Structure probing data (2A3 and DMS) for a 207-nucleotide construct. The RNA was probed in 150 mM KOAc, 10 mM MgCl2 and 150 mM bicine (pH 8.5) at 24 C. For DMS, 2,774 sequencing reads were counted. Reactivities are given for positions 27 through 156.
[RMDB]
RNA sequence: GGGAACGACUCGAGUAGAGUCGAAAACAGAGCUGAUGGGCAAUGUACCUAUCCAAAAUGAGAUCCCAUCUUGCACACUGUGCUAAUUUGAGAUUCUCAUGCCUCCUACUUGGAGAGAUCUGGACUACUAACUGUAUGACGUUCGCGUCAUACAGAACCUACAUGUAGGCUUCGGCCUACAUGUAGGAAAAGAAACAACAACAACAAC
Reactivity to 2A3 in 0.01 (KOAc 150mM, MgCl2 10mM, bicine 150mM(pH8.5), 24C), signal-to-noise 7, nucleotides 027 to 156: c010a000g020a000g030c060u070g020a030u020g020g010g020c110a130a220u230g040u200a190c010c020u030a030u040c030c050a120a060a020a030u030g000a010g000a020u030c020c000c000a000u010c020u030u030g000c010a030c030a080c160u250g010u020g010c050u160a040a070u020u020u030g030a030g010a040u270u070c000u000c010a000u040g040c010c000u020c000c010u130a290c120u160u290g000g000a010g000a010g010a020u020c020u050g010g040a030c050u080a040c010u050a300a060c000u020g000u000a000u000g000a000c000g020u040u030c170g000c000g090u020c000a000u000a000c000a000g000a000a020
Reactivity to DMS in 0.01 (KOAc 150mM, MgCl2 10mM, bicine 150mM(pH8.5), 24C), signal-to-noise 1, nucleotides 027 to 156: c050a080g000a040g020c070u000g000a020u000g030g030g030c050a090a140u020g040u020a110c020c000u000a050u000c010c040a010a050a150a030u000g000a010g000a090u010c010c000c000a000u010c100u000u000g050c000a000c040a240c130u000g020u000g050c010u000a000a050u000u000u000g020a020g000a080u000u000c000u000c000a030u000g000c050c000u000c010c010u000a120c140u000u000g000g000a040g010a080g000a030u000c040u010g020g020a140c080u010a110c160u000a120a170c010u020g020u000a000u000g000a000c000g020u010u000c300g010c050g050u010c000a000u000a000c000a030g000a020a050